[RMDB]
RNA sequence: GGGAACGACUCGAGUAGAGUCGAAAACGGCCUAACGACGGACGCUGACGCGAAAGCGUGGUCUAGCGAACCAAUUAGGCUGCUUGAUGCGGCCAAUUGCUGACAGAAAAGCUACCUUAGGGAUAACGUCAUGGGAUGCCUUCGGGCAUCCCAUGACAAAAGAAACAACAACAACAAC
Reactivity to 2A3 in 0.01 (KOAc 150mM, MgCl2 10mM, bicine 150mM(pH8.5), 24C), signal-to-noise 1, nucleotides 027 to 126: c000g040g010c010c000u010a010a000c000g130a000c110g090g000a000c000g000c060u000g000a000c040g000c000g130a280a030a000g240c010g000u010g040g080u060c070u050a040g080c000g000a000a000c000c060a000a000u000u000a050g000g000c000u030g000c000u070u110g020a040u190g000c000g030g000c000c000a030a210u050u050g000c030u000g120a230c050a020g220a040a130a000a000g000c000u000a000c030c000u170u180a060g000g030g110a110u100a290a080c130